[RMDB]
RNA sequence: GGGAACGACUCGAGUAGAGUCGAAAACUAUCUCUAUCGCCUCGUGUACUGGUGCCCGCCUAGUCGCCACGAUGUGAACCUCUGUGGGUGUAGCUGCGUUGGCACGUAGCGCGCAGAGCACCGUGUGGCUGACAACUCAGUUCGCUGAGUUGUCAGCAAAAGAAACAACAACAACAAC
Reactivity to DMS in 0.01 (KOAc 150mM, MgCl2 10mM, bicine 150mM(pH8.5), 24C), signal-to-noise 2, nucleotides 027 to 126: c110u010a080u000c060u000c080u000a090u000c060g010c040c020u000c050g030u010g010u000a060c040u000g010g000u010g030c000c010c010g020c050c020u010a070g010u000c160g000c010c000a010c010g000a140u010g020u010g000a150a120c070c020u000c150u020g020u000g000g000g000u010g000u000a220g010c000u000g020c000g000u020u010g040g010c080a040c060g010u000a030g000c050g010c030g030c080a070g010a160g020c000a020c010c010g020u000g030u000g010
Reactivity to 2A3 in 0.01 (KOAc 150mM, MgCl2 10mM, bicine 150mM(pH8.5), 24C), signal-to-noise 2, nucleotides 027 to 126: c030u040a110u150c030u010c070u100a110u170c100g030c020c020u020c000g090u040g010u120a050c060u120g000g000u010g030c020c000c000g000c000c000u010a000g010u000c060g000c020c000a030c020g050a070u100g040u010g080a070a030c010c010u090c080u160g140u300g140g000g000u070g060u080a020g000c010u130g100c010g080u160u160g060g000c000a000c040g050u030a010g020c090g000c000g000c110a050g040a000g020c040a010c000c000g050u080g000u010g110

Overview:
This 177-nucleotide RNA was probed chemically with DMS and 2A3. For 2A3, 2,096 sequencing reads were counted. High DMS reactivity at an A or C suggests that its Watson-Crick edge is free. The data come from the RNA Mapping Database (RMDB), library OK2TRN. For DMS, 2,432 sequencing reads were counted.